About this RNA: The record gives the reactivity of an RNA of 177 nucleotides to DMS. For DMS, 1,220 sequencing reads were counted. Conditions: 150 mM KOAc, 10 mM MgCl2 and 150 mM bicine (pH 8.5), 24 C. DMS adducts were read by reverse transcription with MarathonRT.
RNA sequence: GGGAACGACUCGAGUAGAGUCGAAAAGGUCACCUCUUCGGAGGUGACCAAAAAACCGCCCGAACGGCUUCCUGACCGGGCGGAAAAACUAAAACAGGAGCAAAACCCGACUGUUCGCAGUCGGGAACAAAUCAUUAAGGUUCGCCUUAAUGAUUUGAAAAGAAACAACAACAACAAC
Reactivity to DMS in 0.01 (KOAc 150mM, MgCl2 10mM, bicine 150mM(pH8.5), 24C), signal-to-noise 1, nucleotides 027 to 126: g030g040u000c000a000c000c000u000c000u000u000c290g030g010a000g000g010u000g010a000c000c000a000a050a100a120a060a060c010c010g020c000c000c000g040a070a090c070g000g000c020u000u000c000c000u000g010a230c100c000g000g000g000c000g010g010a010a010a040a060a070c050u000a040a030a120a110c080a020g000g000a020g000c060a160a060a130a100c010c000c020g010a010c000u000g020u010u040c190g010c010a010g020u000c030g000g000g000a000a000